[RMDB]
Conditions: 150 mM KOAc, 10 mM MgCl2 and 150 mM bicine (pH 8.5), 24 C. This 207-nucleotide RNA was probed chemically with 2A3 and DMS. The DMS profile rests on 1,934 reads. For 2A3 the reverse transcriptase was SuperScript II with manganese.
RNA sequence: GGGAACGACUCGAGUAGAGUCGAAAACUGAUUGUCGUUUAGUGAGUACGGAAUGGGGUCGUAACUUGACUGUGAAACCGGCAAUAUAUCAACAUCCAGUGAUAGGGUAUUUACAAACGGUAACGGGAAUGCGGGUUGUAACAUUGCACCGUACCUAGCCUAAACCAAAGUUCGCUUUGGUUUAGGCAAAAGAAACAACAACAACAAC
Reactivity to 2A3 in 0.01 (KOAc 150mM, MgCl2 10mM, bicine 150mM(pH8.5), 24C), signal-to-noise 2, nucleotides 027 to 156: c030u000g040a020u030u060g020u000c030g060u040u000u070a050g010u010g070a000g040u010a010c040g000g060a180a120u160g030g010g060g000u030c030g010u030a070a040c030u070u070g240a050c040u070g010u050g160a050a040a000c060c010g000g000c040a080a010u100a020u030a000u080c030a010a030c040a070u050c030c050a100g010u040g050a050u040a040g050g000g030u050a150u050u210u120a070c060a040a070a040c070g020g000u030a070a080c010g000g000g000a000a060u060g060c020g010g030g010u050u020g020u040a030a010c010a010u000u090g020c050a040c020c010g010u010a010c000c000u000a060
Reactivity to DMS in 0.01 (KOAc 150mM, MgCl2 10mM, bicine 150mM(pH8.5), 24C), signal-to-noise 1, nucleotides 027 to 156: c040u000g040a150u000u000g000u000c010g030u010u000u000a100g000u000g010a080g050u020a110c070g050g010a040a090u000g000g040g010g030u010c000g060u000a060a090c140u000u000g030a130c020u010g000u010g010a100a060a080c100c020g000g000c000a010a120u000a120u000a130u000c010a020a060c060a140u000c000c010a080g020u000g010a150u000a060g030g020g040u000a010u010u000u000a110c020a130a030a090c070g010g040u010a080a080c080g020g000g000a060a110u010g000c070g020g020g000u010u020g000u000a080a010c080a070u010u020g000c010a150c020c010g010u000a040c040c000u010a210